[RMDB]
RNA sequence: GGGAACGACUCGAGUAGAGUCGAAAAACUCCAUGCCUGGUCGGCGAGCCAUCCCACCAGGUCGUAGGUGUCCUCGGCUUCCUGGUGUGACAGCAGGUCUCCGGUACCGUCGGAGCGGCCGCAGCCGCGCUCUGACUCACUUCGGUGAGUCAGAGCGAAAAGAAACAACAACAACAAC
Reactivity to DMS in 0.01 (KOAc 150mM, MgCl2 10mM, bicine 150mM(pH8.5), 24C), signal-to-noise 3, nucleotides 027 to 126: a130c080u010c020c040a100u020g000c030c010u000g020g000u020c110g000g000c090g000a090g000c050c140a160u000c020c010c000a050c010c020a020g000g020u000c100g010u000a060g010g020u000g000u000c020c010u010c060g010g010c040u000u000c020c020u000g020g000u000g000u000g020a080c110a120g000c040a140g000g010u010c010u000c020c010g010g010u000a070c140c120g010u020c050g010g000a070g010c120g000g020c010c080g010c080a130g020c030c050g000
Reactivity to 2A3 in 0.01 (KOAc 150mM, MgCl2 10mM, bicine 150mM(pH8.5), 24C), signal-to-noise 2, nucleotides 027 to 126: a000c050u030c040c010a100u150g010c000c010u060g040g020u060c060g050g000c040g010a020g020c030c010a100u040c000c000c020a000c000c010a020g040g000u040c040g050u070a040g060g040u100g060u160c000c010u000c030g030g000c010u080u000c020c010u040g000g070u070g030u040g050a030c000a040g080c040a030g050g050u020c010u000c000c010g060g060u110a190c020c080g080u050c010g040g020a020g020c030g050g000c020c000g030c040a010g030c000c000g030